[RMDB]
RNA sequence: GGGAACGACUCGAGUAGAGUCGAAAAAGAGCUGCCGAUACGUCGGCAGCUCAGGAGCUGGUCGAAAGACCCGGGUCCAUCCGUCGGCGGGUAAGACACCCAGCCACCACCGUACGCGGUGGUGGCACACUUCUUCGCAUUUCGAUGCGAAGAAGUGAAAAGAAACAACAACAACAAC
Reactivity to 2A3 in 0.01 (KOAc 150mM, MgCl2 10mM, bicine 150mM(pH8.5), 24C), signal-to-noise 1, nucleotides 027 to 126: a010g010a000g030c000u000g000c000c040g010a020u050a060c260g160u000c000g020g000c030a000g020c000u000c000a030g010g000a030g090c080u080g000g010u030c010g030a080a080a090g000a030c050c040c050g040g000g000u050c000c000a020u040c030c030g130u160c040g230g040c040g010g040g000u100a120a090g020a010c010a080c070c010c000a060g000c000c000a000c000c020a000c000c000g080u250a120c300g030c030g130g000u010g000g000u000g030g000c020a000